Background: Chemical mapping of a 177-nucleotide RNA with DMS and 2A3. For DMS, 2,693 sequencing reads were counted. Values cover nucleotides 27 to 126. For DMS the reverse transcriptase was MarathonRT. The 2A3 profile rests on 5,638 reads. It was measured as part of the RMDB library TTRDEL. The reactions ran in a buffer of 150 mM KOAc, 10 mM MgCl2 and 150 mM bicine (pH 8.5), at 24 C.
RNA sequence: GGGAACGACUCGAGUAGAGUCGAAAAGAUAUGGACUAGCUCCGUACCCACUAUCUCGGAAACGAGCCGAGGUGGUACGGUGAGGCUAGUCCUAAGUCAAACGGAAUGAGCUUCGGCUCAUUCCGAACCAAUAUUUCGACUUCGGUCGAAAUAUUGGAAAAGAAACAACAACAACAAC
Reactivity to DMS in 0.01 (KOAc 150mM, MgCl2 10mM, bicine 150mM(pH8.5), 24C), signal-to-noise 3, nucleotides 027 to 126: g000a050u000a300u000g000g010a000c000u000a020g010c010u000c000c000g010u000a020c090c040c110a060c050u000a150u020c000u000c000g000g010a070a100a180c140g010a080g010c190c050g000a060g020g010u000g000g010u000a000c000g000g000u010g010a120g000g010c000u000a000g010u000c000c000u000a010a050g000u000c030a090a110a290c000g010g000a040a000u000g000a020g010c000u000u000c190g020g010c000u000c000a010u010u000c000c000g000a010a070
Reactivity to 2A3 in 0.01 (KOAc 150mM, MgCl2 10mM, bicine 150mM(pH8.5), 24C), signal-to-noise 1, nucleotides 027 to 126: g020a020u070a060u190g000g000a000c000u000a020g010c050u030c130c010g000u020a010c020c150c020a060c070u190a190u190c030u000c010g020g090a220a300a270c090g070a210g110c050c030g080a030g000g030u050g000g000u010a000c030g020g050u120g220a160g070g000c010u000a000g000u000c000c000u000a010a000g020u020c030a050a030a080c020g000g020a010a000u020g010a000g000c020u060u160c300g140g010c000u000c000a000u000u000c000c010g010a000a010